[RMDB]
This 207-nucleotide RNA was probed chemically with 2A3 and DMS.
For DMS the reverse transcriptase was MarathonRT.
Conditions: 150 mM KOAc, 10 mM MgCl2 and 150 mM bicine (pH 8.5), 24 C.
The DMS profile rests on 2,544 reads.

RNA sequence: GGGAACGACUCGAGUAGAGUCGAAAACCCGUAUUCGUACGGGACAUAAUCCUAAGUCUAUCCACUAUUGCGUGCAAGGCCGCUGUCGGAAACGACAGAUGGCUGAUGACCACGCAACGAAUGGAUAGAUAUGGAGCAGCUCACCCUUCGGGGUGAAAUAACGAGGAGGAUUCGUCCUCCUCGUUAUAAAAGAAACAACAACAACAAC
Reactivity to 2A3 in 0.01 (KOAc 150mM, MgCl2 10mM, bicine 150mM(pH8.5), 24C), signal-to-noise 3, nucleotides 027 to 156: c000c000c000g000u020a040u020u070c300g010u010a010c020g000g000g040a030c020a180u300a150a080u150c010c010u020a140a060g020u000c000u000a000u000c020c000a000c030u030a030u020u030g010c010g000u020g030c020a140a210g030g010c000c000g000c010u000g010u010c000g000g080a100a090a050c000g010a020c000a000g090a180u170g010g000c010u000g000a010u040g000a010c040c030a000c000g000c000a000a000c020g160a200a150u020g010g010a010u000a000g000a000u010a030u040g000g010a030g070c040a040g080c030u040c020a000c000c020c000u030u070c240g060g000g000g000u010g000a040a030
Reactivity to DMS in 0.01 (KOAc 150mM, MgCl2 10mM, bicine 150mM(pH8.5), 24C), signal-to-noise 1, nucleotides 027 to 156: c000c000c010g010u000a040u000u010c240g040u010a000c030g010g020g030a160c060a080u000a060a050u000c010c010u010a060a300g000u010c010u010a000u000c000c000a030c060u000a140u000u010g030c010g000u000g000c010a070a300g040g000c000c010g020c000u010g010u000c000g010g020a140a080a220c010g020a050c020a000g010a030u000g040g020c000u000g000a020u000g010a100c300c000a010c000g000c010a000a010c090g010a030a020u000g000g000a030u000a000g000a000u000a160u000g030g000a090g010c090a140g000c110u000c000a030c040c000c000u000u000c260g000g000g000g000u000g000a010a110